[RMDB]
The record gives the reactivity of an RNA of 177 nucleotides to DMS and 2A3. Conditions: 150 mM KOAc, 10 mM MgCl2 and 150 mM bicine (pH 8.5), 24 C. DMS adducts were read by reverse transcription with MarathonRT. The data come from the RNA Mapping Database (RMDB), library OK2TST. Values are in units of 0.01, from 0 to 300, in steps of 10.
RNA sequence: GGGAACGACUCGAGUAGAGUCGAAAACUUCAGCCCUUUCUCUAACUCCUCCAUUGGGGUCCCCAUGCUCAGUCUGAUGGAUGGCUGAGAAAAUCUGCAUCUGUAUUCGUCAGACACUGGCAGAGCAGAUAUCACUCGGAUUCGUCCGAGUGAUAUCAAAAGAAACAACAACAACAAC
Reactivity to DMS in 0.01 (KOAc 150mM, MgCl2 10mM, bicine 150mM(pH8.5), 24C), signal-to-noise 3, nucleotides 027 to 126: c110u000u010c090a100g010c020c010c090u010u000u010c050u000c030u000a100a090c060u000c000c000u010c160c200a140u010u010g000g040g000g030u000c020c000c010c040a130u000g020c010u010c050a110g010u010c000u000g000a060u000g000g010a030u000g010g020c010u000g000a020g010a060a040a120a150u000c030u000g000c030a130u000c080u010g020u000a110u000u000c030g010u000c030a040g000a030c100a060c170u000g010g000c100a060g010a070g020c050a090
Reactivity to 2A3 in 0.01 (KOAc 150mM, MgCl2 10mM, bicine 150mM(pH8.5), 24C), signal-to-noise 1, nucleotides 027 to 126: c030u130u090c060a060g010c000c000c030u040u120u060c060u000c010u070a110a070c000u000c020c010u070c100c000a070u050u110g000g010g000g020u060c020c000c000c000a050u070g000c000u020c060a010g060u000c020u000g020a030u050g070g020a030u040g100g000c010u040g010a020g080a060a040a000a020u060c060u040g010c000a100u000c050u020g110u120a070u010u050c000g000u020c010a010g020a060c030a040c090u010g060g040c020a030g000a020g060c010a010